[RMDB]
RNA sequence: GGGAACGACUCGAGUAGAGUCGAAAAAGUAAAUCAGCAUCAGCCGUCGGUUUGGCGGGUAAAUCGGGCGACGGACGUGUAUAGUCAAAAUUGCGCAACUCGCUAAAAAUAUUGUUUGCGGCCAGUUUAAAUGUAGUGUAAAUGGUAUCACCCAACACAUAACGUAAAACUUCGGUUUUACGUUAUGAAAAGAAACAACAACAACAAC
Reactivity to DMS in 0.01 (KOAc 150mM, MgCl2 10mM, bicine 150mM(pH8.5), 24C), signal-to-noise 3, nucleotides 027 to 156: a090g020u000a040a110a090u000c040a120g010c030a100u000c040a090g010c010c000g030u000c030g030g040u000u010u000g030g000c010g020g020g010u000a020a060a090u000c060g010g040g030c000g040a020c040g010g000a060c020g030u000g020u010a080u000a150g020u020c080a090a030a090a090u000u010g000c020g000c050a110a090c040u000c060g060c030u000a010a090a070a050a120u000a080u000u010g010u000u010u000g030c040g010g010c000c000a070g010u000u000u000a030a070a060u000g000u000a070g040u000g010u000a030a050a080u000g000g020u040a080u000c040a080c020c010c010a050a070c180a130
Reactivity to 2A3 in 0.01 (KOAc 150mM, MgCl2 10mM, bicine 150mM(pH8.5), 24C), signal-to-noise 4, nucleotides 027 to 156: a000g100u090a040a060a050u120c060a040g040c020a050u060c030a030g040c010c010g030u050c050g040g040u040u080u070g030g000c040g000g000g000u060a080a100a040u140c060g040g040g030c020g000a040c040g030g010a020c020g040u050g050u090a120u100a110g050u030c020a050a040a050a100u100u130g020c080g000c030a030a040c010u010c050g000c030u100a030a070a000a040a010u140a070u100u140g070u070u080u100g000c000g020g000c020c000a020g000u040u060u140a060a100a020u110g010u060a070g020u010g030u110a000a090a070u050g030g000u020a020u090c030a040c060c000c010a040a040c060a010

The record gives the reactivity of an RNA of 207 nucleotides to DMS and 2A3.
It was measured as part of the RMDB library OK3TST.
DMS (dimethyl sulfate) methylates the pairing face of unpaired adenines and cytosines.
Values cover nucleotides 27 to 156.
For DMS, 6,781 sequencing reads were counted.